Structure probing data (DMS and 2A3) for a 177-nucleotide construct.
2A3 adducts were read by reverse transcription with SuperScript II with manganese.
The 2A3 profile rests on 1,082 reads.
Source: RMDB library M2PK50, as collected in RNAgym.
The reactions ran in a buffer of 150 mM KOAc, 10 mM MgCl2 and 150 mM bicine (pH 8.5), at 24 C.
RNA sequence: GGGAACGACUCGAGUAGAGUCGAAAAUCAUCGUUCUUCGGAACGAUGAAGUAUAACGCGGGCUCCGGACACAGGCGUAGCUGGCCUCGGAUAGUCACAGUAUGGGGCAAACUUUCGAGUUUGCCAACGCGGUAAGAUAGUUCGCUAUCUUACCGCGAAAAGAAACAACAACAACAAC
Reactivity to DMS in 0.01 (KOAc 150mM, MgCl2 10mM, bicine 150mM(pH8.5), 24C), signal-to-noise 2, nucleotides 027 to 126: u000c000a000u000c000g010u000u000c010u000u000c230g010g020a000a050c000g000a000u000g020a010a120g020u000a090u020a110a070c120g000c100g020g000g010c030u000c020c030g060g000a010c100a100c210a050g000g000c080g010u000a070g030c040u000g000g050c030c020u010c010g000g000a080u000a000g020u010c020a070c050a080g060u000a060u000g000g000g000g000c010a000a000a020c000u000u000u020c190g030a000g020u000u000u000g000c010c020a040a050
Reactivity to 2A3 in 0.01 (KOAc 150mM, MgCl2 10mM, bicine 150mM(pH8.5), 24C), signal-to-noise 1, nucleotides 027 to 126: u000c000a000u000c000g010u010u010c020u030u050c220g120g010a000a000c000g000a000u010g000a000a000g040u040a080u040a190a010c060g030c080g050g040g090c030u030c010c040g060g000a030c100a010c000a160g130g000c030g050u050a040g000c060u050g090g000c010c000u040c020g020g040a060u090a130g040u000c020a010c040a120g060u110a120u140g080g020g120g000c000a000a000a020c000u110u040u110c260g050a010g000u000u010u030g000c000c000a020a020